[RMDB]
RNA sequence: GGGAACGACUCGAGUAGAGUCGAAAAUACUCCAACGCCGAGGCAAUGUUCGUCGGCGCCCAGUAUGACGUCGACAAGGACGUCAUGGUCAGCUGGUUGCCCUGCUUCCAUGACAUGGGCAUGGUGGUAAAUCAAGGCUUUUCGAAGCCUUGAUUUAAAAAGAAACAACAACAACAAC
Reactivity to 2A3 in 0.01 (KOAc 150mM, MgCl2 10mM, bicine 150mM(pH8.5), 24C), signal-to-noise 4, nucleotides 027 to 126: u070a010c030u020c020c000a000a050c010g020c020c010g000a010g000g020c060a170a300u210g070u240u080c120g090u030c010g150g000c000g020c020c010c000a050g000u090a010u030g010a000c010g000u000c010g040a230c130a120a050g180g000a000c000g000u010c010a000u010g000g020u140c030a030g000c040u020g020g000u060u080g010c010c010c000u060g020c030u110u000c020c010a100u050g090a120c040a160u150g020g140g000c000a010u020g030g000u050g000g040
Reactivity to DMS in 0.01 (KOAc 150mM, MgCl2 10mM, bicine 150mM(pH8.5), 24C), signal-to-noise 6, nucleotides 027 to 126: u010a130c090u000c030c030a110a160c060g010c010c010g010a050g000g020c070a220a100u010g010u010u010c020g020u000c020g010g010c010g010c100c020c040a050g000u010a030u000g000a010c000g020u000c010g000a130c300a170a180g000g000a020c000g020u000c000a020u000g010g010u010c210a110g000c030u000g010g010u000u000g000c010c020c030u010g010c040u000u000c050c060a060u000g000a050c050a180u010g020g010g020c010a020u000g010g010u000g000g010